RNA sequence: GGGAACGACUCGAGUAGAGUCGAAAACAGAAUCUCCACCUGCUAUUGGUGGCCUUGGAACCCUGCCCGAUGACUUCCAGGCACAGGAAUCCUAUGCCUUUAUUUGGUAGCCUGUCUCCUUAUUGAGCCGUCAGAAUUACUUCGGUAAUUCUGACGGAAAAGAAACAACAACAACAAC
Reactivity to 2A3 in 0.01 (KOAc 150mM, MgCl2 10mM, bicine 150mM(pH8.5), 24C), signal-to-noise 1, nucleotides 027 to 126: c010a030g030a070a110u070c030u000c050c010a000c000c020u060g100c060u270a100u260u070g000g010u000g020g000c020c010u020u040g040g020a000a010c030c000c000u020g040c000c040c000g080a080u060g050a050c020u070u020c050c040a000g020g000c030a010c000a060g020g060a060a100u070c010c000u040a040u040g010c000c000u080u090u090a220u150u130u080g070g010u040a010g040c000c000u040g000u050c020u020c010c020u100u190a190u090u170g150a060g060
Reactivity to DMS in 0.01 (KOAc 150mM, MgCl2 10mM, bicine 150mM(pH8.5), 24C), signal-to-noise 1, nucleotides 027 to 126: c120a130g010a050a180u020c050u000c010c040a040c010c010u000g010c160u000a090u020u010g040g000u000g010g000c240c020u010u030g010g000a010a130c080c010c030u000g020c010c000c030g000a010u010g020a100c150u010u000c040c070a050g010g010c130a070c030a070g010g000a190a090u000c050c060u000a040u000g000c010c030u010u010u000a060u010u000u030g000g000u000a050g020c040c030u000g000u020c050u000c000c030u000u000a080u000u020g000a170g000
Conditions: 150 mM KOAc, 10 mM MgCl2 and 150 mM bicine (pH 8.5), 24 C. Structure probing data (2A3 and DMS) for a 177-nucleotide construct. For 2A3 the reverse transcriptase was SuperScript II with manganese. DMS adducts were read by reverse transcription with MarathonRT.